[RMDB]
This 177-nucleotide RNA was probed chemically with DMS and 2A3. For 2A3 the reverse transcriptase was SuperScript II with manganese. The data come from the RNA Mapping Database (RMDB), library M2PK50.
RNA sequence: GGGAACGACUCGAGUAGAGUCGAAAAGAGCUUUUUUUCGAAAAAGCUCCGGCGCAAUGGCUAUGUGUACACUUCACAAGGGUUUGUGGUGGUCAAUGGCAAUACCAGCAAUCUUCGGAUUGCUGAAGCUGAUAGUACUCUUCGGAGUACUAUCAGCAAAAGAAACAACAACAACAAC
Reactivity to DMS in 0.01 (KOAc 150mM, MgCl2 10mM, bicine 150mM(pH8.5), 24C), signal-to-noise 1, nucleotides 027 to 126: g010a010g020c010u010u000u000u000u010u000u030c160g000a000a000a010a000a000g000c000u000c010c010g020g010c050g070c040a070a060u000g000g000c000u010a040u000g030u000g020u010a090c040a010c070u010u010c010a080c110a010a130g010g020g020u010u010u000g020u000g000g020u000g000g000u000c040a060a080u000g010g020c070a110a080u010a080c180c020a010g010c000a000a000u000c000u010u020c190g020g020a000u010u000g000c000u000g000a040a130
Reactivity to 2A3 in 0.01 (KOAc 150mM, MgCl2 10mM, bicine 150mM(pH8.5), 24C), signal-to-noise 1, nucleotides 027 to 126: g000a000g000c030u000u040u000u040u000u040u100c080g050a000a000a000a000a000g020c000u000c000c010g080g060c030g000c030a080a090u120g040g000c040u060a050u090g110u010g050u120a030c090a050c050u020u070c050a010c050a140a160g100g050g090u080u120u010g040u110g010g020u020g030g000u050c000a060a050u040g000g000c000a010a080u110a220c090c000a000g040c010a000a010u000c020u030u020c210g070g000a010u030u000g030c000u000g000a000a000